[RMDB]
An RNA of 177 nucleotides, treated with 2A3 and read out base by base. The RNA was probed in 150 mM KOAc, 10 mM MgCl2 and 150 mM bicine (pH 8.5) at 24 C.
RNA sequence: GGGAACGACUCGAGUAGAGUCGAAAAUAUUUUGUUUUUAAAUGUGACCUCGCCGGAAUUUUUUUUUUCAAAUUAAAAUCCAUGUCUUCACUUUGUAUGCCAGCAGGAGUGGGAUACGGGACAGACAGGCUUUCGUAAGCUUCGGCUUACGAAGGCCAAAAGAAACAACAACAACAAC
Reactivity to 2A3 in 0.01 (KOAc 150mM, MgCl2 10mM, bicine 150mM(pH8.5), 24C), signal-to-noise 2, nucleotides 027 to 126: u130a110u050u120u120u000g070u020u040u030u030u120a150a210a070u120g000u020g030a100c000c030u010c050g000c060c020g020g050a010a000u080u030u000u000u000u000u040u040u150u180c110a120a100a040u100u180a090a030a000a030u000c020c050a020u010g010u000c040u060u200c020a070c060u010u030u100g050u010a020u120g120c000c000a030g080c050a040g040g150a040g080u010g010g000g030a010u010a050c000g000g000g000a000c000a000g060a010c050a040